[RMDB]
RNA sequence: GGGAACGACUCGAGUAGAGUCGAAAACCCGGUUGCCGUGGUUGCAGGCCCGGCCCGCCAGCUUGUCCGCUGACAGCGAGCCAUUAGGGCGGAGGGAAGCGGGUCCGUUGGUCCUUCAGGCACGAGGGUGCAUUCACUGUUUCGACAGUGAAUGCACAAAAGAAACAACAACAACAAC
Reactivity to DMS in 0.01 (KOAc 150mM, MgCl2 10mM, bicine 150mM(pH8.5), 24C), signal-to-noise 1, nucleotides 027 to 126: c040c000c000g000g000u010u010g060c010c030g000u000g000g000u000u030g000c030a000g000g010c000c000c000g000g030c090c000c000g000c000c000a300g030c020u010u020g030u010c030c020g000c050u000g000a070c190a180g000c060g000a140g000c150c130a110u000u030a160g000g000g000c010g000g010a300g000g000g000a300a040g000c010g030g000g000u120c070c020g000u050u010g030g010u070c030c010u000u000c000a030g000g000c030a000c000g000a220g020g000
Reactivity to 2A3 in 0.01 (KOAc 150mM, MgCl2 10mM, bicine 150mM(pH8.5), 24C), signal-to-noise 2, nucleotides 027 to 126: c000c000c020g030g020u030u110g000c030c000g010u000g040g300u000u000g030c040a010g000g000c000c010c010g000g000c010c000c010g020c000c000a120g070c050u130u160g170u180c020c000g000c030u080g130a100c000a030g050c050g150a070g050c110c030a130u140u240a110g040g180g000c010g000g000a000g030g000g000a020a020g000c000g010g030g000u060c030c020g080u070u200g040g000u200c000c010u000u000c040a010g000g020c010a000c010g000a130g100g050